Chemical mapping of a 177-nucleotide RNA with DMS and 2A3.

RNA sequence: GGGAACGACUCGAGUAGAGUCGAAAAACGGUGCUACGGCACCGACUAACAAGGGGAUAAAAAAAUUCAAAUGUGAAACAACUAAUAUUCAAAUGUACGACGACCUUAAACAGCUCGGUGAAACUAAUACUAGCAAUCACUUCGGUGAUUGCUAGUAAAAAGAAACAACAACAACAAC
Reactivity to DMS in 0.01 (KOAc 150mM, MgCl2 10mM, bicine 150mM(pH8.5), 24C), signal-to-noise 1, nucleotides 027 to 126: a150c060g000g000u000g010c000u010a100c070g020g030c000a000c000c040g000a010c010u000a130a030c230a100a040g000g000g000g000a120u060a050a000a080a130a040a080a110u000u000c160a030a040a090u060g000u020g010a050a060a040c200a010a070c090u060a020a070u050a120u000u000c080a080a000a090u040g030u030a000c050g000a040c080g000a010c120c050u010u090a000a030a180c150a020g000c060u020c000g000g000u000g020a130a030a070c100u030a000a060
Reactivity to 2A3 in 0.01 (KOAc 150mM, MgCl2 10mM, bicine 150mM(pH8.5), 24C), signal-to-noise 2, nucleotides 027 to 126: a000c000g040g000u000g000c030u020a030c300g030g000c020a000c000c010g090a010c000u120a030a040c040a150a100g080g000g020g000a030u230a010a120a000a000a010a000a000u130u070c080a080a150a030u120g010u020g090a120a040a030c040a080a020c060u240a040a010u050a090u010u140c010a100a000a150u040g020u010a000c000g050a000c050g000a000c010c000u180u300a000a140a140c050a060g020c000u000c040g090g000u160g050a080a010a000c070u060a000a030
About this RNA
The data come from the RNA Mapping Database (RMDB), library RFM100. For 2A3 the reverse transcriptase was SuperScript II with manganese. The reactions ran in a buffer of 150 mM KOAc, 10 mM MgCl2 and 150 mM bicine (pH 8.5), at 24 C. Values cover nucleotides 27 to 126.